This 177-nucleotide RNA was probed chemically with DMS and 2A3. The reactions ran in a buffer of 150 mM KOAc, 10 mM MgCl2 and 150 mM bicine (pH 8.5), at 24 C. The DMS profile rests on 939 reads. It was measured as part of the RMDB library OK2TST. In probing experiments dimethyl sulfate is read out at A N1 and C N3, which are open when not base-paired. DMS adducts were read by reverse transcription with MarathonRT.
[RMDB]
RNA sequence: GGGAACGACUCGAGUAGAGUCGAAAAGCAUCGGGAUUCCAGGUCGACACCAACACGUCGGUGUCGCCGGCGCCGUCGGUCCCCGAUUCGACGACCACGUCGGUGAGCACCGGGCCGCCGGAAGUCACUUGGUGCUGUCAUUCGUGACAGCACCAAGAAAAGAAACAACAACAACAAC
Reactivity to DMS in 0.01 (KOAc 150mM, MgCl2 10mM, bicine 150mM(pH8.5), 24C), signal-to-noise 2, nucleotides 027 to 126: g000c070a000u010c000g000g010g060a140u000u000c010c010a130g010g040u010c050g050a020c050a010c040c060a070a180c240a200c300g000u000c110g020g020u000g020u000c000g030c010c000g000g000c060g010c090c110g020u000c000g000g020u020c000c030c040c030g000a020u010u000c000g030a010c010g020a070c230c300a080c030g000u000c000g000g030u030g010a180g030c050a010c000c000g000g000g030c100c050g030c030c000g020g000a100a110g000u000c050a080
Reactivity to 2A3 in 0.01 (KOAc 150mM, MgCl2 10mM, bicine 150mM(pH8.5), 24C), signal-to-noise 1, nucleotides 027 to 126: g010c020a000u040c010g030g040g000a060u050u090c020c000a070g060g170u140c050g000a000c000a010c060c000a090a060c080a000c180g290u200c040g000g000u000g000u010c020g000c000c000g030g020c050g000c000c010g190u160c010g000g040u000c060c000c020c010g040a010u120u110c000g010a000c020g000a070c070c060a210c070g010u030c020g000g000u110g060a080g000c040a030c010c070g000g010g020c040c040g060c010c010g010g040a020a030g050u100c050a000